About this RNA: Structure probing data (2A3 and DMS) for a 177-nucleotide construct. Source: RMDB library OK2TST, as collected in RNAgym. Conditions: 150 mM KOAc, 10 mM MgCl2 and 150 mM bicine (pH 8.5), 24 C.
[RMDB]
RNA sequence: GGGAACGACUCGAGUAGAGUCGAAAAAUCUGGGGCCAGAAGGCGGCAGUGGUGGCGGUGAAAUUUUGGUCUCCGGCACACCAGAGACGGUGGCGGAAUGCGCGGCAUCACACACGGCACGGUUCCAGCCAGGUAAUAAUUUCGAUUAUUACCUGGCAAAAGAAACAACAACAACAAC
Reactivity to 2A3 in 0.01 (KOAc 150mM, MgCl2 10mM, bicine 150mM(pH8.5), 24C), signal-to-noise 5, nucleotides 027 to 126: a000u050c030u010g000g000g010g030c020c010a050g060a180a100g140g000c030g030g060c090a120g020u030g030g020u020g010g060c070g040g010u060g050a120a160a090u110u080u010u080g190g020u030c020u000c020c000g050g040c020a030c010a020c090c060a050g020a010g020a180c050g020g000u020g010g010c020g010g020a040a020u060g030c080g010c010g090g000c010a030u080c020a020c000a000c010a010c010g070g000c010a010c060g010g000u010u040c000c000a010
Reactivity to DMS in 0.01 (KOAc 150mM, MgCl2 10mM, bicine 150mM(pH8.5), 24C), signal-to-noise 4, nucleotides 027 to 126: a110u010c060u010g020g000g000g020c030c010a130g010a100a140g000g010c030g010g020c070a080g010u000g020g020u010g000g010c010g020g020u000g000a040a070a090u000u000u000u000g020g010u000c020u000c010c010g000g010c070a110c100a100c180c110a090g010a110g010a040c070g010g030u000g010g010c020g010g010a030a020u000g010c060g030c010g020g010c010a050u000c030a030c040a070c100a170c050g000g010c040a080c080g010g010u000u000c010c020a070

For DMS, 4,068 sequencing reads were counted. High DMS reactivity at an A or C suggests that its Watson-Crick edge is free.